Structure probing data (2A3 and DMS) for a 177-nucleotide construct.
The data come from the RNA Mapping Database (RMDB), library OK1LIB.
The DMS profile rests on 24,970 reads.
The 2A3 profile rests on 128,154 reads.
Reactivities are rounded to 0.1 and cut off at 0 and 3.
Conditions: 150 mM KOAc, 10 mM MgCl2 and 150 mM bicine (pH 8.5), 24 C.
2A3 adducts were read by reverse transcription with SuperScript II with manganese.
RNA sequence: GGGAACGACUCGAGUAGAGUCGAAAAGCCGUUAGCACUUGAUAUUUGAGACUUUUGUCUCUUGUAGUUGAUACGAAGGCCUUUGUAUCUACUACUUUAGGCCUUUUAUAUCUUGUGCUUUCGGCGAGGGUUGGCGCUCCUUCGGGGGCGCUGGCCCAAAAGAAACAACAACAACAAC
Reactivity to 2A3 in 0.01 (KOAc 150mM, MgCl2 10mM, bicine 150mM(pH8.5), 24C), signal-to-noise 9, nucleotides 027 to 126: g000c000c000g000u000u000a000g000c000a000c010u000u010g000a000u000a010u020u040u050g020a020g020a030c050u100u160u280u300g010u000c000u000c010u000u060g010u000a030g010u020u180g080a050u010a020c020g010a030a010g120g070c030c060u030u020u030g010u000a020u040c080u080a060c030u010a000c000u060u030u040a010g000g000c000c000u010u020u020u010a010u000a000u000c000u000u000g000u000g000c000u000u000u000c000g000g000c000g000a070
Reactivity to DMS in 0.01 (KOAc 150mM, MgCl2 10mM, bicine 150mM(pH8.5), 24C), signal-to-noise 4, nucleotides 027 to 126: g010c000c000g010u000u010a000g010c000a010c000u000u000g000a020u000a000u000u020u000g000a000g000a050c040u020u030u040u040g020u000c000u010c010u010u010g020u010a020g010u030u040g000a160u000a010c020g010a010a000g000g000c050c030u000u000u000g010u000a010u010c230u000a110c200u000a000c000u010u000u000a000g010g000c000c010u000u000u010u010a020u000a000u010c000u000u010g000u000g000c000u010u000u000c000g000g000c010g000a050